[RMDB]
RNA sequence: GGGAACGACUCGAGUAGAGUCGAAAAUGAAACAAGAAGAACCAACAACUGGCAAGAAUUGGCUCUAGUUCUAAUCGUUAGCGUUACUUUCGCAUCUUCCAAUUCUAAUCUAACCAAUAGAACCAGACCGACUGACUAUCUUCGGAUAGUCAGUCGGAAAAGAAACAACAACAACAAC
Reactivity to 2A3 in 0.01 (KOAc 150mM, MgCl2 10mM, bicine 150mM(pH8.5), 24C), signal-to-noise 2, nucleotides 027 to 126: u190g000a010a000a110c200a060a030g090a270a000g070a080a020c030c080a000a120c000a040a040c030u010g040g000c000a030a120g010a130a190u040u060g080g000c000u170c070u050a000g060u120u000c040u050a150a110u050c030g010u040u110a000g000c000g080u050u060a130c020u140u170u030c030g030c000a080u000c060u050u000c000c030a090a140u160u000c020u070a000a070u010c000u010a000a150c080c000a070a020u020a040g040a020a000c040c010a000g000a000